[RMDB]
RNA sequence: GGGAACGACUCGAGUAGAGUCGAAAAUUAAAUUUAGGUCAGCCGAUCAAAGUGGUAAUUUCUUUAAAGAAUGUAGUAAAAACAAAUAUAUGAACUGCCCUUAUAAUCAGCCAUCAUCGCAUUGCCGAGCUAGUAUACAUUUCGAUGUAUACUAGCUAAAAGAAACAACAACAACAAC
Reactivity to 2A3 in 0.01 (KOAc 150mM, MgCl2 10mM, bicine 150mM(pH8.5), 24C), signal-to-noise 2, nucleotides 027 to 126: u030u010a080a000a000u070u090u050a030g000g040u050c030a010g040c040c050g030a020u030c060a050a090a070g080u070g040g010u040a050a070u050u010u060c010u030u250u080a100a180a010g030a050a060u100g030u070a050g020u040a080a100a030a110a000c050a000a180a020u190a040u040a030u080g030a030a010c020u010g020c000c000c000u080u000a100u020a100a080u060c030a000g000c000c010a020u040c020a000u050c020g030c050a030u000u070g060c050c000g030
Reactivity to DMS in 0.01 (KOAc 150mM, MgCl2 10mM, bicine 150mM(pH8.5), 24C), signal-to-noise 3, nucleotides 027 to 126: u010u000a050a080a140u000u000u000a080g000g010u000c020a090g020c050c050g020a060u000c080a040a080a090g020u000g020g000u000a050a070u000u000u000c030u000u010u000a120a100a120g010a090a040u010g000u000a090g010u000a030a040a090a070a070c040a030a060a060u000a090u000a080u000g000a060a070c100u000g010c030c030c030u000u000a100u010a120a060u000c050a050g000c030c030a030u000c060a030u000c040g010c080a070u000u010g010c050c050g000
The data come from the RNA Mapping Database (RMDB), library OK2TST. Structure probing data (2A3 and DMS) for a 177-nucleotide construct. 2A3 adducts were read by reverse transcription with SuperScript II with manganese. Conditions: 150 mM KOAc, 10 mM MgCl2 and 150 mM bicine (pH 8.5), 24 C.